[RMDB]
RNA sequence: GGGAACGACUCGAGUAGAGUCGAAAACGCGUUGUGAUCACCGCAGUGGAAUCUCCAGAAUCGGAUACUGCUGCCGAGCCUUCGCGCUUUUUACAGGGAAUCGCAGAAUCAAAAGAACAAGGCCCAAAUUGUUUGUGCGAUUCGUCGCACAAACAAUAAAAGAAACAACAACAACAAC
Reactivity to DMS in 0.01 (KOAc 150mM, MgCl2 10mM, bicine 150mM(pH8.5), 24C), signal-to-noise 1, nucleotides 027 to 126: c000g000c000g020u000u000g010u010g030a010u000c020a120c190c200g020c010a020g040u000g010g020a090a040u000c140u000c100c060a190g020a080a170u030c160g000g000a020u000a180c000u000g010c000u000g030c040c140g000a130g010c030c000u000u000c000g030c020g010c080u020u010u010u000u000a100c100a140g030g000g010a040a010u000c020g000c030a070g010a050a100u000c070a080a070a130a070g010a040a020c020a030a050g020g030c000c050c060a060a100

Structure probing data (DMS) for a 177-nucleotide construct.